[RMDB]
RNA sequence: GGGAACGACUCGAGUAGAGUCGAAAACGAUUCCGAUUCGUCGGAAUCGAUACGGGACUGGUCGAAAGACCCGGGUCCUACCACGGCGGGGAGUUACUCCAAUCUUACCCUACUUCGGUAGGGUAAGUAAUCUAUCUUUGUUCGCAAAGAUAGAUUAAAAAGAAACAACAACAACAAC
Reactivity to 2A3 in 0.01 (KOAc 150mM, MgCl2 10mM, bicine 150mM(pH8.5), 24C), signal-to-noise 5, nucleotides 027 to 126: c000g000a000u000u020c000c000g010a020u030u050c200g050u010c010g070g010a010a000u000c000g000a010u050a080c080g000g000g020a010c020u060g020g000u010c010g040a080a030a040g010a020c020c000c010g110g020g010u010c000c000u010a040c010c020a050c040g100g010c070g000g020g000g000a050g030u060u060a090c030u030c020c010a030a060u030c000u000u000a000c000c000c010u000a000c010u020u040c150g080g000u000a000g000g010g000u000a000a000g000
Reactivity to DMS in 0.01 (KOAc 150mM, MgCl2 10mM, bicine 150mM(pH8.5), 24C), signal-to-noise 9, nucleotides 027 to 126: c010g000a010u000u000c000c000g010a030u000u010c200g020u000c000g010g000a020a000u000c000g010a060u010a030c170g010g000g000a030c020u000g010g010u000c010g010a120a100a150g000a020c010c010c300g010g000g000u000c010c000u000a090c030c020a080c130g010g000c060g010g000g000g000a120g010u000u010a070c080u010c030c090a090a100u010c000u000u000a000c000c000c000u000a000c000u000u010c180g020g010u000a010g000g000g000u000a000a000g010
An RNA of 177 nucleotides, treated with 2A3 and DMS and read out base by base. For 2A3 the reverse transcriptase was SuperScript II with manganese. Source: RMDB library RFMREP, as collected in RNAgym. The DMS profile rests on 15,000 reads. Values cover nucleotides 27 to 126.